An RNA of 177 nucleotides, treated with 2A3 and DMS and read out base by base. The DMS profile rests on 1,593 reads. 2A3 adducts were read by reverse transcription with SuperScript II with manganese. It was measured as part of the RMDB library OK1LIB. The 2A3 profile rests on 454 reads.
[RMDB]
RNA sequence: GGGAACGACUCGAGUAGAGUCGAAAAUACAAAAGAAUUUUUUAACAAAUGCGGUUUUUAUGCCAUCAGCUCAUUAGUUUAGAUGGCAGUAAUGAGAAGUUGGCUAAUAGUGAUGCGAAGGCGUGCACCGUACCGGAUUAUUCGUAAUCCGGUACGGAAAAGAAACAACAACAACAAC
Reactivity to 2A3 in 0.01 (KOAc 150mM, MgCl2 10mM, bicine 150mM(pH8.5), 24C), signal-to-noise 1, nucleotides 027 to 126: u190a000c010a020a080a080a000g140a000a130u030u140u090u050u080u060a100a030c050a020a050a020u060g000c050g020g000u000u030u040u080u100a000u020g000c000c000a000u000c000a000g000c000u000c190a170u000u230a000g110u040u000u220a060g010a090u270g000g000c000a000g000u000a030a110u050g000a010g000a060a050g010u030u000g000g000c040u030a000a020u030a110g070u020g010a030u080g030c030g000a020a000g000g040c040g030u050g040c000a030
Reactivity to DMS in 0.01 (KOAc 150mM, MgCl2 10mM, bicine 150mM(pH8.5), 24C), signal-to-noise 1, nucleotides 027 to 126: u030a030c120a060a040a140a130g010a070a000u030u000u000u010u010u080a100a060c120a020a030a070u000g020c050g010g040u000u040u000u000u010a150u010g000c010c010a000u020c020a020g020c000u000c080a000u020u000a080g010u030u040u080a070g020a010u000g000g000c040a040g020u010a000a000u000g000a080g010a000a050g000u000u010g020g020c000u010a030a050u000a010g020u020g020a010u010g020c010g020a040a070g000g000c010g000u000g040c130a150